Chemical mapping of a 177-nucleotide RNA with 2A3 and DMS.
It was measured as part of the RMDB library OK2TRN.
2A3 adducts were read by reverse transcription with SuperScript II with manganese.
The 2A3 profile rests on 9,805 reads.
The reactions ran in a buffer of 150 mM KOAc, 10 mM MgCl2 and 150 mM bicine (pH 8.5), at 24 C.
[RMDB]
RNA sequence: GGGAACGACUCGAGUAGAGUCGAAAAGACACGACGGAGACGUCGUGUCAAAGAGUGGGAAACCACUCAAAGAGCCACAGCUUCGGCUGUGGCUCAAGGCGCGGCGGAGUCCGCGGAACAAACGUAACCGUACUAUGAUAUUCGUAUCAUAGUACGGAAAAGAAACAACAACAACAAC
Reactivity to 2A3 in 0.01 (KOAc 150mM, MgCl2 10mM, bicine 150mM(pH8.5), 24C), signal-to-noise 4, nucleotides 027 to 126: g000a010c000a000c010g010a010c010g010g020a070g030a050c010g010u000c000g000u000g000u010c000a000a000a000g010a000g000u010g010g000g010a010a070a080c000c000a000c000u000c000a030a030a000g000a000g030c010c000a020c010a020g060c000u110u170c300g120g000c000u020g010u020g000g000c000u000c000a000a000g010g000c010g000c000g010g000c080g120g220a110g060u060c010c000g000c010g000g030a050a020c070a070a070a010c060g120u110a050a040
Reactivity to DMS in 0.01 (KOAc 150mM, MgCl2 10mM, bicine 150mM(pH8.5), 24C), signal-to-noise 5, nucleotides 027 to 126: g010a020c000a010c010g010a020c000g010g010a290g010a230c000g020u000c010g030u000g010u000c000a030a060a090g000a020g020u010g010g000g010a160a110a240c000c000a010c000u000c000a050a090a090g020a020g020c000c000a010c000a010g030c000u000u020c300g020g030c010u000g060u000g000g000c000u000c000a020a050g010g020c030g030c000g000g020c020g000g010a180g020u010c000c000g020c000g000g000a090a090c170a030a050a100c190g000u010a090a190